[RMDB]
The record gives the reactivity of an RNA of 177 nucleotides to 2A3 and DMS. DMS adducts were read by reverse transcription with MarathonRT. The DMS profile rests on 39,819 reads. The data come from the RNA Mapping Database (RMDB), library OK1LIB. Reactivities are given for positions 27 through 126.
RNA sequence: GGGAACGACUCGAGUAGAGUCGAAAAGGCAGGAAUAGAAUGGGCCGAAUCUAGUGUUUCACUGCAGGCCAGAUGCUAUUUUUGUUUGGCGCAAGGCCUGGUGGCUGAUGCGGCUGUGUUCUAAUAGCAAUAUUAUUAAUUUCGAUUAAUAAUAUUGAAAAGAAACAACAACAACAAC
Reactivity to 2A3 in 0.01 (KOAc 150mM, MgCl2 10mM, bicine 150mM(pH8.5), 24C), signal-to-noise 3, nucleotides 027 to 126: g070g010c040a010g050g090a060a040u020a020g010a010a020u020g030g010g000c000c000g000a000a000u000c020u070a030g030u020g080u010u050u130c010a010c010u060g030c010a000g000g020c000c000a010g040a020u030g000c000u020a090u050u050u010u050u150g300u090u110u080g010g000c000g000c060a040a050g000g000c010c000u000g010g010u020g010g000c010u010g010a000u050g010c000g000g010c010u070g080u030g010u100u000c020u030a070a090u030a050g000
Reactivity to DMS in 0.01 (KOAc 150mM, MgCl2 10mM, bicine 150mM(pH8.5), 24C), signal-to-noise 8, nucleotides 027 to 126: g000g020c040a050g010g010a080a080u010a000g010a030a020u010g010g000g000c010c000g000a040a030u010c010u030a010g010u000g010u000u010u040c000a020c010u010g010c030a020g040g020c000c000a040g010a150u030g000c010u000a010u010u020u040u030u030g010u020u020u010g010g000c010g030c080a180a140g000g010c000c000u000g010g020u000g000g000c010u000g010a040u000g000c030g000g000c010u000g010u030g010u000u000c010u000a050a090u010a110g000